[RMDB]
RNA sequence: GGGAACGACUCGAGUAGAGUCGAAAACUAGCAGAUACAGUACGUACUAGUCUCAUGGUACAGUACGCGAGCUCUAGUGAUCGCUAGGUACCGAUCUCUAGUCUGAUCUCAGAGAGUACUAUCAUGCAGGCAUAAAUCAGUUCGCUGAUUUAUGCCUAAAAGAAACAACAACAACAAC
Reactivity to DMS in 0.01 (KOAc 150mM, MgCl2 10mM, bicine 150mM(pH8.5), 24C), signal-to-noise 4, nucleotides 027 to 126: c050u000a090g000c040a040g020a030u000a030c060a050g000u000a020c000g000u000a010c010u000a060g010u000c160u000c200a160u010g000g000u000a000c020a100g020u000a010c020g030c260g000a170g000c000u000c020u010a110g010u000g000a010u000c010g000c010u000a010g010g000u010a200c160c090g010a060u010c040u010c000u000a010g000u000c150u020g000a040u000c010u000c020a050g010a040g000a040g010u000a020c300u000a010u010c030a070u000g010c050
Reactivity to 2A3 in 0.01 (KOAc 150mM, MgCl2 10mM, bicine 150mM(pH8.5), 24C), signal-to-noise 3, nucleotides 027 to 126: c030u020a030g010c020a000g010a000u020a020c010a000g000u010a000c000g000u020a010c010u030a030g150u040c070u050c170a230u140g000g010u020a030c070a090g000u000a000c000g010c020g030a020g020c010u000c010u050a060g010u000g030a020u010c000g000c010u020a000g040g050u100a140c060c130g160a300u040c070u000c000u050a020g030u000c110u160g040a010u000c020u000c020a000g000a000g010a010g020u000a030c010u000a000u050c070a140u090g010c040
The data come from the RNA Mapping Database (RMDB), library OK2TRN.
The record gives the reactivity of an RNA of 177 nucleotides to DMS and 2A3.
DMS adducts were read by reverse transcription with MarathonRT.
Reactivities are given for positions 27 through 126.
The RNA was probed in 150 mM KOAc, 10 mM MgCl2 and 150 mM bicine (pH 8.5) at 24 C.
For DMS, 4,068 sequencing reads were counted.